RNA sequence: GGGAACGACUCGAGUAGAGUCGAAAAGAUAUGGACACCUCUCAACAGCCGUGAGGUCGGAAACGACCUACGGACAUGAACGUGAGGUGUCCUAAGUCAAACAGACCGAUGUUCGCAUCGGUCUGAAGUGAAAGAAUAGCUUCGGCUAUUCUUUCACAAAAGAAACAACAACAACAAC
Reactivity to 2A3 in 0.01 (KOAc 150mM, MgCl2 10mM, bicine 150mM(pH8.5), 24C), signal-to-noise 2, nucleotides 027 to 126: g000a010u000a010u040g000g010a000c000a000c030c010u000c000u020c020a100a300c080a300g040c020c000g030u080g300a060g010g000u000c000g000g000a010a000a000c010g000a000c000c010u000a000c010g000g020a010c030a160u290g130a060a020c040g000u010g000a000g000g000u000g000u010c000c000u000a000a000g000u000c000a000a010a130c000a000g010a000c010c000g010a010u000g060u080u120c300g040c180a000u010c000g000g000u000c000u000g000a030a010
Reactivity to DMS in 0.01 (KOAc 150mM, MgCl2 10mM, bicine 150mM(pH8.5), 24C), signal-to-noise 2, nucleotides 027 to 126: g000a010u030a020u020g000g010a010c000a000c000c010u000c000u000c010a070a160c080a210g000c000c000g020u000g000a020g010g010u000c000g000g000a000a020a030c020g020a000c000c000u000a010c010g030g010a020c060a060u020g010a100a050c140g000u000g000a020g000g040u000g000u000c010c000u000a000a020g000u000c000a130a120a300c000a010g000a010c010c000g010a020u000g010u000u020c250g040c020a010u000c000g010g000u000c000u000g000a020a080